[RMDB]
RNA sequence: GGGAACGACUCGAGUAGAGUCGAAAAGAGCUUUUUUUCGAAAAAGCUCCGGCGCAAUCCCUAUGUGUACACUUCACAAGGGUUUGUGGUGGUCAAUGGCAAUACCAGCAAUCUUCGGAUUGCUGAAGACCUACAUAAACUUCGGUUUAUGUAGGUCAAAAGAAACAACAACAACAAC
Reactivity to DMS in 0.01 (KOAc 150mM, MgCl2 10mM, bicine 150mM(pH8.5), 24C), signal-to-noise 3, nucleotides 027 to 126: g000a020g000c000u000u000u000u000u000u000u010c150g000a000a040a000a010a010g020c000u000c000c040g030g000c050g010c030a050a030u010c000c000c010u000a110u000g010u000g010u000a090c300a120c240u000u000c020a010c020a040a030g000g010g000u010u000u000g020u000g000g020u010g010g010u000c090a040a030u010g000g000c110a090a100u010a090c200c000a000g000c000a000a000u000c000u000u000c150g000g000a010u000u000g010c000u000g000a050a080
Reactivity to 2A3 in 0.01 (KOAc 150mM, MgCl2 10mM, bicine 150mM(pH8.5), 24C), signal-to-noise 2, nucleotides 027 to 126: g000a020g010c010u000u000u010u000u010u020u160c090g020a070a000a000a000a000g000c000u010c020c000g060g030c020g000c010a000a020u050c010c010c000u060a300u060g050u000g000u040a060c210a100c250u120u090c010a000c010a000a000g000g040g000u020u020u020g040u020g010g300u060g030g010u080c050a090a090u140g120g000c030a060a080u040a260c060c010a030g000c000a000a010u010c000u000u020c090g130g010a000u020u000g000c000u010g000a010a010
Source: RMDB library M2PK50, as collected in RNAgym. This 177-nucleotide RNA was probed chemically with DMS and 2A3. The RNA was probed in 150 mM KOAc, 10 mM MgCl2 and 150 mM bicine (pH 8.5) at 24 C.